[RMDB]
RNA sequence: GGGAACGACUCGAGUAGAGUCGAAAAGAUAUGGACUCGUAACGUAUAUUCGCUGACGCAACAGCUAUGACCUCGGAAACGAGGUAUAGACAUGCGUCAGCGAAUAUACGGAGAAGAGUCCUAAGUCGGUACUAGUAAACUUCGGUUUACUAGUACCAAAAGAAACAACAACAACAAC
Reactivity to DMS in 0.01 (KOAc 150mM, MgCl2 10mM, bicine 150mM(pH8.5), 24C), signal-to-noise 4, nucleotides 027 to 126: g020a090u010a300u000g000g000a010c000u000c000g000u000a200a300c000g000u000a010u000a000u000u000c000g020c000u000g020a010c000g000c010a040a140c300a210g000c000u000a000u010g010a040c000c020u000c010g030g010a140a130a220c030g030a000g020g010u000a010u000a010g000a030c090a230u000g010c000g010u000c000a020g010c000g000a000a000u000a000u000a000c000g000g010a070g000a140a240g000a010g000u010c000c000u000a010a120g020u000c110
The record gives the reactivity of an RNA of 177 nucleotides to DMS.
DMS adducts were read by reverse transcription with MarathonRT.
Conditions: 150 mM KOAc, 10 mM MgCl2 and 150 mM bicine (pH 8.5), 24 C.